[RMDB]
RNA sequence: GGGAACGACUCGAGUAGAGUCGAAAAGAUAUGGAGUGGUUGGGAGCGAUAGGUUCGGAAACGAACCGAAAUCGCGAAGAACAACGUAACAUCUCCUAAGUCAAACACGCUUCUUCGGAAGCGUGAAUCUAAUGGGAUUGUUCGCAAUCCCAUUAGAAAAAGAAACAACAACAACAAC
Reactivity to 2A3 in 0.01 (KOAc 150mM, MgCl2 10mM, bicine 150mM(pH8.5), 24C), signal-to-noise 3, nucleotides 027 to 126: g000a000u010a010u070g000g010a000g010u030g000g020u050u010g000g000g010a030g000c010g000a000u020a110g020g000u010u010c000g000g040a000a010a010c010g010a000a000c010c010g000a030a050a030u010c000g000c010g040a210a000g010a000a010c010a010a010c030g130u220a190a060c030a200u090c000u000c010c000u000a010a010g020u010c030a100a040a050c010a010c000g000c000u010u010c000u020u070c300g120g000a000a000g000c000g010u000g000a000a040
Reactivity to DMS in 0.01 (KOAc 150mM, MgCl2 10mM, bicine 150mM(pH8.5), 24C), signal-to-noise 6, nucleotides 027 to 126: g000a010u000a040u010g000g000a030g040u000g010g010u000u000g000g000g010a030g030c000g020a010u000a150g010g010u000u000c000g000g000a000a020a030c010g010a000a010c010c000g000a030a060a050u000c000g020c000g010a070a130g000a170a170c010a000a000c010g010u010a100a250c170a070u000c010u000c000c010u010a020a110g000u000c010a100a090a190c010a000c000g000c000u000u000c000u000u010c210g020g010a010a010g000c000g010u000g000a030a070